About this RNA: Source: RMDB library TTRINS, as collected in RNAgym. This 177-nucleotide RNA was probed chemically with DMS. The DMS profile rests on 1,753 reads. Reactivities are given for positions 27 through 126. For DMS the reverse transcriptase was MarathonRT.
RNA sequence: GGGAACGACUCGAGUAGAGUCGAAAAGAUAUGGACGUGGUAGGGAGCGUAUGAUUCAGUACCGGUACAUCGGAAACGAUGUACCGGUACUGAAUCAUCACGCAUCGAUCUACACACGUCCUAAGUCCUUAUUCAAGCACUUCGGUGCUUGAAUAAGAAAAGAAACAACAACAACAAC
Reactivity to DMS in 0.01 (KOAc 150mM, MgCl2 10mM, bicine 150mM(pH8.5), 24C), signal-to-noise 1, nucleotides 027 to 126: g010a130u010a300u010g000g000a020c000g050u000g010g020u000a000g000g010g000a020g000c000g030u000a020u000g010a010u000u000c000a000g020u000a020c000c010g000g000u000a020c000a000u000c000g000g000a150a120a260c000g020a000u010g010u000a000c020c000g000g020u000a000c000u000g000a010a000u000c000a000u000c280a000c020g010c000a160u010c200g020a070u020c000u000a010c000a200c000a000c000g000u000c010c000u000a010a100g000u000c010